Structure probing data (DMS) for a 177-nucleotide construct.
In probing experiments dimethyl sulfate is read out at A N1 and C N3, which are open when not base-paired.
For DMS the reverse transcriptase was MarathonRT.
It was measured as part of the RMDB library OK2TRN.
Conditions: 150 mM KOAc, 10 mM MgCl2 and 150 mM bicine (pH 8.5), 24 C.
RNA sequence: GGGAACGACUCGAGUAGAGUCGAAAACUCUGUGCUUCCUUCUCUCUAUGUACUCACCCCGCCACCUCUGAUCCUUUGGGGACCUACAGAGCACUCUGGUGCCACAUGAUCUCCUGCCAUGCCUCACAAAAUGAGGAGGGUUCGCCCUCCUCAUUUUAAAAGAAACAACAACAACAAC
Reactivity to DMS in 0.01 (KOAc 150mM, MgCl2 10mM, bicine 150mM(pH8.5), 24C), signal-to-noise 2, nucleotides 027 to 126: c040u010c020u010g020u000g010c000u010u000c030c020u000u000c030u000c000u000c040u000a050u000g020u000a070c080u010c070a170c060c010c040c040g020c060c030a070c040c020u030c050u000g000a170u000c030c010u000u010u010g020g000g010g000a050c100c050u000a120c110a100g000a090g000c060a040c060u010c150u010g000g030u000g000c050c040a050c090a050u010g010a050u000c020u000c040c000u000g010c070c030a090u010g030c040c000u000c070a080c180